[RMDB]
RNA sequence: GGGAACGACUCGAGUAGAGUCGAAAAAUGUCAAAGGGACACACCCUUCGCGCGUCCUGGGGCGUGCCAGUCGAUGACGAGGAAAAUCGUAUCGAUUGAAAUCUGCGUCCCGGGGCCGAUUGGGAGGGACUCAUCUCAGGUUCGCCUGAGAUGAGUCAAAAGAAACAACAACAACAAC
Reactivity to DMS in 0.01 (KOAc 150mM, MgCl2 10mM, bicine 150mM(pH8.5), 24C), signal-to-noise 2, nucleotides 027 to 126: a090u010g000u100c070a110a090a080g010g010g020a080c050a090c150a150c010c000c000u010u030c050g020c050g010c150g050u000c010c020u020g000g000g000g000c010g000u000g020c300c030a000g000u000c000g000a000u000g000a000c000g020a020g000g010a110a120a070a240u000c010g070u030a000u000c000g000a000u000u000g000a080a190a010u200c080u040g000c030g000u000c000c000c000g010g060g000g000c010c000g020a080u000u030g000g000g000a010g000g020
Reactivity to 2A3 in 0.01 (KOAc 150mM, MgCl2 10mM, bicine 150mM(pH8.5), 24C), signal-to-noise 3, nucleotides 027 to 126: a000u120g020u070c060a100a020a150g120g070g030a040c030a000c000a020c040c010c000u020u010c060g030c010g000c110g090u040c000c000u010g010g000g010g000c000g000u030g030c030c010a000g000u000c010g000a000u080g210a060c000g000a010g070g220a180a050a000a170u020c010g000u000a000u000c000g000a000u000u020g020a060a030a010u060c080u160g000c000g000u010c000c000c000g000g000g000g000c000c000g020a030u050u170g070g000g000a040g000g060
Notes: An RNA of 177 nucleotides, treated with DMS and 2A3 and read out base by base. The DMS profile rests on 1,821 reads. The RNA was probed in 150 mM KOAc, 10 mM MgCl2 and 150 mM bicine (pH 8.5) at 24 C. Values cover nucleotides 27 to 126.